Background: Conditions: 150 mM KOAc, 10 mM MgCl2 and 150 mM bicine (pH 8.5), 24 C. This 177-nucleotide RNA was probed chemically with DMS and 2A3. The data come from the RNA Mapping Database (RMDB), library OK1LIB. For DMS the reverse transcriptase was MarathonRT. Reactivities are given for positions 27 through 126.
RNA sequence: GGGAACGACUCGAGUAGAGUCGAAAAUUCACUAUGUUGGCUAGGCUGACCUUGAGCUCCUGGCCUCAAGUAAUCCACCUGCCUCGGCCUCCCAAAGUUCUAGGAUUACUGACGAGUGUGGUGAGCCAACCCCGAUUGUUUUCGAACAAUCGGGGUUAAAAGAAACAACAACAACAAC
Reactivity to DMS in 0.01 (KOAc 150mM, MgCl2 10mM, bicine 150mM(pH8.5), 24C), signal-to-noise 3, nucleotides 027 to 126: u010u000c050a030c030u040a040u030g000u010u020g000g000c050u000a010g010g000c140u000g000a110c010c150u040u030g030a220g030c050u000c020c020u010g020g010c000c000u000c050a030a020g010u000a040a040u010c010c020a210c130c050u010g010c020c040u010c070g000g000c030c040u000c010c000c020a060a120a100g000u020u020c080u000a070g000g000a010u010u000a000c000u020g000a040c110g040a090g000u040g040u020g000g020u020g000a050g040c090c070
Reactivity to 2A3 in 0.01 (KOAc 150mM, MgCl2 10mM, bicine 150mM(pH8.5), 24C), signal-to-noise 2, nucleotides 027 to 126: u020u010c000a000c010u100a050u140g100u110u100g030g000c010u020a020g020g010c110u000g070a190c110c030u160u190g070a060g020c000u010c000c030u010g000g000c000c000u040c000a010a000g010u000a000a060u000c000c020a020c030c020u090g010c020c000u010c020g030g000c000c000u040c000c020c000a040a090a010g040u060u060c110u050a080g060g040a040u020u070a020c000u010g110a060c080g080a100g000u060g000u060g020g000u030g000a000g020c000c000